Source: RMDB library OK3TST, as collected in RNAgym. An RNA of 207 nucleotides, treated with 2A3 and DMS and read out base by base. For DMS the reverse transcriptase was MarathonRT.

[RMDB]
RNA sequence: GGGAACGACUCGAGUAGAGUCGAAAACGAUCUGUUCGCAGAUCGAGCUACGGAGACGUAGCAAAGUCAGCGUUGACCAGGUCGCUGACCCUACCGGAGAUGUAAGCUUUUCCACGUGUGCUAGGAAAAGCCCUGGUCAUCAGAAUCAGCACACGAAUACUCUCAGAUUAUUCGUAAUCUGAGAGUAAAAAGAAACAACAACAACAAC
Reactivity to 2A3 in 0.01 (KOAc 150mM, MgCl2 10mM, bicine 150mM(pH8.5), 24C), signal-to-noise 3, nucleotides 027 to 156: c000g000a000u000c000u000g020u050u040c140g000c020a000g000a000u000c000g000a030g000c000u000a000c000g000g020a060g010a050c000g000u000a000g000c010a050a040a000g010u010c000a000g000c000g000u020u070g010a000c010c000a010g000g010u060c000g000c010u010g000a010c050c000c010u050a060c020c040g080g030a080g020a040u120g100u190a100a070g000c000u010u000u000u000c000c000a040c040g010u000g000u000g000c000u030a050g000g010a000a000a000a000g000c000c000c000u000g000g050u000c000a030u060c030a020g070a070a050u050c010a030g000c010a000c000a000c000g000a030a010
Reactivity to DMS in 0.01 (KOAc 150mM, MgCl2 10mM, bicine 150mM(pH8.5), 24C), signal-to-noise 2, nucleotides 027 to 156: c020g000a000u010c020u000g030u000u000c200g020c020a110g010a000u000c000g000a170g000c020u000a030c000g010g000a270g000a260c000g040u000a000g010c000a030a030a060g000u000c020a030g000c060g040u000u010g010a080c050c030a070g010g010u000c000g030c030u000g010a070c010c010c060u000a210c080c060g010g000a160g010a230u030g000u010a160a100g030c010u000u000u000u000c000c010a150c050g000u000g010u000g000c010u010a190g020g010a040a020a010a070g000c030c030c000u000g010g000u010c000a120u000c120a160g000a120a160u000c060a050g010c030a030c010a030c030g000a200a250